[RMDB]
RNA sequence: GGGAACGACUCGAGUAGAGUCGAAAACUUUUCAGCGAAUCGCCCCAAAUAUUCAUAGAUUGCUGUACAACACUUGCUGUCGUUUGCAAAUCAGCUCCAGCAGCCGUAGCAGCUUCGGCAAUAGCUGUAAGUCAUGGUGUUUCGACACCAUGACUUAAAAAGAAACAACAACAACAAC
Reactivity to 2A3 in 0.01 (KOAc 150mM, MgCl2 10mM, bicine 150mM(pH8.5), 24C), signal-to-noise 1, nucleotides 027 to 126: c010u070u130u150u020c010a030g000c010g130a020a050u030c000g030c000c000c000c000a000a200a070u210a040u140u200c120a060u060a140g010a050u000u020g070c000u000g030u120a100c050a100a010c050a040c060u050u120g010c020u010g050u090c020g100u040u130u040g090c030a020a060a300u190c040a060g010c000u010c040c000a020g000c030a020g000c000c030g010u020a020g000c000a000g000c000u010u030c020g070g000c070a030a050u130a050g070c050u050g030
Reactivity to DMS in 0.01 (KOAc 150mM, MgCl2 10mM, bicine 150mM(pH8.5), 24C), signal-to-noise 2, nucleotides 027 to 126: c070u000u000u010u000c020a010g020c020g020a020a030u000c000g000c130c020c010c090a070a080a080u010a090u000u000c150a090u000a120g010a050u000u010g010c030u000g020u000a050c290a050a070c130a060c060u010u000g010c010u000g000u000c100g000u010u010u000g040c040a010a070a100u010c150a090g000c020u020c070c010a060g010c030a050g010c020c000g000u000a060g010c010a030g010c000u000u000c000g000g010c110a020a030u040a030g010c000u000g020
The data come from the RNA Mapping Database (RMDB), library OK2TST. This 177-nucleotide RNA was probed chemically with 2A3 and DMS. The RNA was probed in 150 mM KOAc, 10 mM MgCl2 and 150 mM bicine (pH 8.5) at 24 C. Values cover nucleotides 27 to 126.